[RMDB]
RNA sequence: GGGAACGACUCGAGUAGAGUCGAAAAGAUAUGGAUCGUGGUUGGAGCCUCACGUCGGAAACGACGUGAAGGCUAUGAAGACUAAACGAUCCUAAGUCAAAUCGGACGUUGUUCGCAACGUCCGAAACUCCAUCUUUGACUUCGGUCAAAGAUGGAGAAAAGAAACAACAACAACAAC
Reactivity to 2A3 in 0.01 (KOAc 150mM, MgCl2 10mM, bicine 150mM(pH8.5), 24C), signal-to-noise 1, nucleotides 027 to 126: g000a010u050a010u080g020g000a000u020c000g060u070g060g020u040u020g030g030a010g000c010c000u000c000a000c000g000u000c000g010g010a010a010a010c000g020a000c020g000u020g000a000a000g000g000c000u010a070u020g000a000a000g020a000c020u130a120a300a120c080g000a010u010c010c000u000a010a000g020u000c000a030a050a180u030c000g010g000a020c000g010u000u020g030u120u140c180g000c210a000a000c000g020u000c000c000g000a000a000a000
Reactivity to DMS in 0.01 (KOAc 150mM, MgCl2 10mM, bicine 150mM(pH8.5), 24C), signal-to-noise 1, nucleotides 027 to 126: g000a000u000a030u020g000g000a000u010c000g050u000g020g030u000u000g000g000a030g000c000c010u000c000a010c000g020u000c000g000g010a000a040a020c000g010a040c010g030u000g000a020a010g030g030c010u000a050u000g000a180a260g000a010c000u000a040a210a140c070g000a000u000c000c000u000a020a050g000u000c000a050a200a200u000c010g020g000a030c010g040u000u010g000u010u030c260g000c000a000a010c000g000u020c000c000g000a000a040a060